[RMDB]
RNA sequence: GGGAACGACUCGAGUAGAGUCGAAAAUAGCGAGAGUGAAUGCCGCAAAUGUUCUGCAACGCUUCGCGCCACAUGCCAGCCAUGUACGGCAAAACCUCUUUUUCAUCGUAAAAAUCCACGUCGUAACCUCCAAAUAAAAAACGCCUACACGAGAAUGCAACAGGGAGAUGUUCGCAUCUCCCUGUUGAAAAGAAACAACAACAACAAC
Reactivity to 2A3 in 0.01 (KOAc 150mM, MgCl2 10mM, bicine 150mM(pH8.5), 24C), signal-to-noise 1, nucleotides 027 to 156: u170a010g050c030g000a010g000a010g090u060g060a190a130u070g000c000c030g050c050a000a150a140u120g030u120u090c010u020g040c020a110a070c090g000c050u120u170c020g010c110g000c060c000a050c000a050u020g050c090c070a010g030c020c000a000u030g090u090a060c060g000g000c010a000a000a000a080c000c010u020c000u070u010u010u040u040c090a100u010c060g030u090a000a120a020a090a050u000c050c000a070c080g010u020c020g030u040a050a070c020c000u030c020c030a050a120a040u170a090a120a060a020a030a000c090g070c000c040u180a100c120a010c030g040a020g090a110a000u080g020